Source: RMDB library M2RFPK, as collected in RNAgym.
This 207-nucleotide RNA was probed chemically with DMS and 2A3.
For 2A3 the reverse transcriptase was SuperScript II with manganese.
[RMDB]
RNA sequence: GGGAACGACUCGAGUAGAGUCGAAAAAUACACCAGCAGUAGGACUCAGCGACCGUCACAACCAGGUUGUGCUGGUAUCCGACGGUCGUAUAGCCCUGUCUUGCAGGUUGCCUUGCACUGACGUGCCACACCAUUUACAGAUUCGUCUGUAAAUGAAGCUAUCAAUAACCUUCGGGUUAUUGAUAGCAAAAGAAACAACAACAACAAC
Reactivity to DMS in 0.01 (KOAc 150mM, MgCl2 10mM, bicine 150mM(pH8.5), 24C), signal-to-noise 2, nucleotides 027 to 156: a150u000a090c050a240c030c000a110g000c040a050g000u010a040g000g020a040c000u010c100a300g020c010g010a020c000c000g000u010c010a160c050a140a090c020c030a030g020g030u000u030g010u020g000c000u010g000g030u000a060u000c150c010g030a030c020g020g020u000c010g000u000a040u010a050g010c000c000c000u000g020u010c030u000u000g010c020a090g020g020u010u000g010c020c110u000u000g030c000a050c030u000g010a110c220g020u000g010c010c000a080c060a120c070c000a010u000u000u000a000c010a020g020a070u000u020c300g010u010c000u000g010u000a000a010a010u000g000a100a110
Reactivity to 2A3 in 0.01 (KOAc 150mM, MgCl2 10mM, bicine 150mM(pH8.5), 24C), signal-to-noise 6, nucleotides 027 to 156: a000u160a010c090a010c010c000a020g000c010a010g010u000a000g000g000a040c000u030c100a020g010c010g010a000c010c000g000u000c010a020c030a100a080c020c000a020g040g050u170u080g120u300g160c000u010g030g000u020a100u070c070c050g000a000c000g000g000u000c000g000u010a030u000a010g000c000c010c000u050g090u090c060u080u180g020c010a010g010g020u020u090g060c020c020u040u110g020c010a020c020u200g110a060c180g000u020g000c040c030a090c010a020c020c010a000u010u000u000a000c000a000g020a030u020u150c190g100u000c090u000g000u000a000a000a000u010g020a020a020
Conditions: 150 mM KOAc, 10 mM MgCl2 and 150 mM bicine (pH 8.5), 24 C.